[RMDB]
RNA sequence: GGGAACGACUCGAGUAGAGUCGAAAAGUUUGUGUGCACCUCUGUCCCGUGUGUGCCCACGUCAGUGGCUUUGUCUGUGUGAUCUGUGUGUGUGUGUGGCUUGGGGAAUCUGCCCAGUGCAGGUUUAUCAUUAUCAGUAUUUCGAUACUGAUAAUGAAAAAGAAACAACAACAACAAC
Reactivity to 2A3 in 0.01 (KOAc 150mM, MgCl2 10mM, bicine 150mM(pH8.5), 24C), signal-to-noise 4, nucleotides 027 to 126: g030u030u150u110g030u010g020u020g020c020a030c010c020u000c060u080g070u060c020c000c040g000u030g010u010g000u000g030c040c040c000a020c020g130u120c040a070g040u040g120g010c030u060u090u130g040u020c040u030g080u010g020u040g080a100u020c020u030g020u000g000u000g000u000g000u000g000u000g050u030g040g000c000u020u050g020g010g000g000a010a040u000c010u040g010c000c030c040a090g030u100g060c010a010g050g010u050u060u070a060
Reactivity to DMS in 0.01 (KOAc 150mM, MgCl2 10mM, bicine 150mM(pH8.5), 24C), signal-to-noise 9, nucleotides 027 to 126: g010u000u010u010g020u000g010u000g010c020a040c030c030u000c060u010g010u000c020c020c000g010u000g010u010g020u000g000c030c030c010a040c050g010u010c160a080g020u000g010g010c050u000u000u000g010u000c040u000g010u000g010u000g000a060u000c030u010g010u000g010u000g010u000g010u000g010u000g000u000g010g010c050u000u000g010g010g010g000a050a030u000c020u000g010c010c020c150a130g010u010g020c020a020g010g010u000u000u000a070